This 177-nucleotide RNA was probed chemically with DMS and 2A3.
In probing experiments dimethyl sulfate is read out at A N1 and C N3, which are open when not base-paired.
For DMS the reverse transcriptase was MarathonRT.
The RNA was probed in 150 mM KOAc, 10 mM MgCl2 and 150 mM bicine (pH 8.5) at 24 C.
Source: RMDB library M2PK90, as collected in RNAgym.
[RMDB]
RNA sequence: GGGAACGACUCGAGUAGAGUCGAAAAGCCGACUGCACGUGCGUGCGAGCAGUUUUCGAAAUCGCACGUUUCACGUAAAGACCCAACUCUACUCGAUGCGAGGGUCAGCAAGCAACCAGCAAUAAAACCAUGGUAAAAACUUCGGUUUUUACCAUGGAAAAGAAACAACAACAACAAC
Reactivity to DMS in 0.01 (KOAc 150mM, MgCl2 10mM, bicine 150mM(pH8.5), 24C), signal-to-noise 3, nucleotides 027 to 126: g030c090c080g030a110c060u010g000c240a020c030g010u000g010c020g000u000g010c010g000a010g010c180a160g020u010u010u020u010c110g000a070a150a110u000c010g020c000a010c000g000u000u010u020c050a020c040g010u010a040a170a060g000a100c050c070c010a130a080c010u000c010u000a020c000u000c000g000a030u010g010c040g000a120g020g000g010u000c010a080g020c030a040a070g020c050a040a070c040c030a110g030c070a090a060u010a040a080a100a100
Reactivity to 2A3 in 0.01 (KOAc 150mM, MgCl2 10mM, bicine 150mM(pH8.5), 24C), signal-to-noise 2, nucleotides 027 to 126: g040c010c020g060a060c040u080g020c020a000c030g000u000g000c010g000u010g010c000g000a060g090c100a060g030u090u080u090u300c070g070a070a100a120u000c010g020c000a010c000g000u010u100u050c020a010c010g000u010a030a090a010g050a020c030c020c000a010a010c000u010c000u020a030c010u010c010g040a030u070g010c030g020a080g000g000g030u010c010a000g000c010a020a020g010c010a020a050c030c030a010g030c040a060a040u090a220a100a010a020